[RMDB]
RNA sequence: GGGAACGACUCGAGUAGAGUCGAAAAAGUCAGUGGUCCGACUUACGAGUAGGACCACUGACAUGGCAGCUGGAUCCAGCCAGGCGGUGUAUCGCCAAACCCAGCCAAUCAAUCUACCCACCGGGAAUACAGAAAGCGAACUUCGGUUCGCUUUCAACUACAUAGGACUCUUCGGAGUCCUAUGUAGAAAAGAAACAACAACAACAAC
Reactivity to 2A3 in 0.01 (KOAc 150mM, MgCl2 10mM, bicine 150mM(pH8.5), 24C), signal-to-noise 1, nucleotides 027 to 156: a000g020u010c000a000g000u010g000g000u000c000c000g050a000c010u050u000a060c190g140a000g010u020a020g010g000a000c010c000a000c000u010g000a000c000a000u010g010g000c010a010g000c000u010g020g000a100u100c120c020a010g020c000c000a020g000g020c030g010g010u190g070u170a190u300c010g050c040c030a000a020a000c000c010c000a010g030c020c010a050a080u160c000a000a090u050c040u120a050c020c010c020a080c090c010g020g050g050a080a050u200a110c050a070g000a000a010a000g000c000g010a000a010c010u060u110c250g020g010u020u020c000g000c000u000u000u000c000a000a000
The record gives the reactivity of an RNA of 207 nucleotides to 2A3.
For 2A3 the reverse transcriptase was SuperScript II with manganese.